This 207-nucleotide RNA was probed chemically with 2A3 and DMS. The DMS profile rests on 3,886 reads.
[RMDB]
RNA sequence: GGGAACGACUCGAGUAGAGUCGAAAACCUGGUUUAGGGUUCCAGGCUAGCCCUAUCUAUCGGUCGAGAUGCGAGCGCUCAAGCUCAAAUUGAGUGGCUGAGUUAGUGGUGAACGUAUCCCUAUGUUAAAACGGUAGCUGCUUCGGCAGCUACCGAAUCAUAUGACUUUGUUCGCAAAGUCAUAUGAAAAAGAAACAACAACAACAAC
Reactivity to 2A3 in 0.01 (KOAc 150mM, MgCl2 10mM, bicine 150mM(pH8.5), 24C), signal-to-noise 3, nucleotides 027 to 156: c000c000u010g000g030u050u090u070a040g000g000g020u080u000c020c000a030g040g000c020u030a020g000c000c020c000u000a010u030c010u040a160u050c000g000g030u010c030g020a020g010a120u020g020c030g020a010g000c040g010c090u160c290a070a040g000c000u010c010a020a030a010u010u020g020a030g050u200g060g000c000u010g000a000g020u000u020a060g000u130g110g000u020g030a050a020c020g020u050a090u120c000c000c000u010a070u070g090u040u100a060a110a020a020c010g010g000u000a000g000c000u010g000c010u050u080c170g100g000c030a000g020c010u000a000c000c000g000a000a000
Reactivity to DMS in 0.01 (KOAc 150mM, MgCl2 10mM, bicine 150mM(pH8.5), 24C), signal-to-noise 3, nucleotides 027 to 156: c090c000u010g000g000u000u010u000a020g030g000g040u010u000c040c020a120g030g030c010u010a300g000c030c000c000u010a020u000c020u000a090u000c010g020g030u000c010g020a300g030a040u010g000c300g000a070g020c040g020c130u050c160a090a120g010c040u000c080a040a270a120u000u010g000a190g020u010g030g020c020u010g000a100g000u000u000a020g040u020g040g020u000g000a150a170c060g000u010a090u000c010c020c000u000a160u010g020u000u000a050a090a110a230c010g030g000u000a020g010c020u010g000c000u000u000c300g050g010c000a020g010c000u000a000c000c020g000a000a010
Conditions: 150 mM KOAc, 10 mM MgCl2 and 150 mM bicine (pH 8.5), 24 C.